[RMDB]
RNA sequence: GGGAACGACUCGAGUAGAGUCGAAAAGUUCAAAACAAGUCACAGGGCAACAGAAAAUGGUAUUCUACGUUGUAUUUUCUAGCAAUACAACAAAUUUAUCAUACGAAUAAGGGAGAACCUAGAAAUCUUAAAUACUACUGUUCGCAGUAGUAUUUAAAAAAGAAACAACAACAACAAC
Reactivity to 2A3 in 0.01 (KOAc 150mM, MgCl2 10mM, bicine 150mM(pH8.5), 24C), signal-to-noise 7, nucleotides 027 to 126: g010u020u040c030a030a040a090a080c020a060a040g050u040c030a040c010a110g000g030g020c020a060a030c020a080g120a090a100a010a020u040g000g020u020a020u060u050c050u090a050c100g000u000u000g010u000a010u010u040u040u060c110u080a070g070c080a010a000u000a000c000a000a000c000a000a020a000u040u030u010a040u040c020a010u040a090c070g070a140a070u100a130a050g030g030g000a080g020a030a020c010c010u050a060g070a030a080a020u040c020
Reactivity to DMS in 0.01 (KOAc 150mM, MgCl2 10mM, bicine 150mM(pH8.5), 24C), signal-to-noise 9, nucleotides 027 to 126: g010u010u000c070a070a060a140a110c110a080a070g000u000c050a060c080a060g000g010g020c050a080a070c080a060g010a070a060a080a030u000g000g000u000a010u010u010c090u020a100c210g000u000u000g010u000a000u000u000u010u020c140u030a070g010c180a020a010u000a000c010a010a010c010a060a100a090u010u010u010a020u010c030a020u010a090c140g010a070a060u020a060a100g010g000g000a120g010a050a060c050c020u010a080g010a060a080a070u020c100
An RNA of 177 nucleotides, treated with 2A3 and DMS and read out base by base.
For DMS the reverse transcriptase was MarathonRT.
Reactivities are rounded to 0.1 and cut off at 0 and 3.
The reactions ran in a buffer of 150 mM KOAc, 10 mM MgCl2 and 150 mM bicine (pH 8.5), at 24 C.
Source: RMDB libraries RFM100 and RFMREP, as collected in RNAgym.
2A3 adducts were read by reverse transcription with SuperScript II with manganese.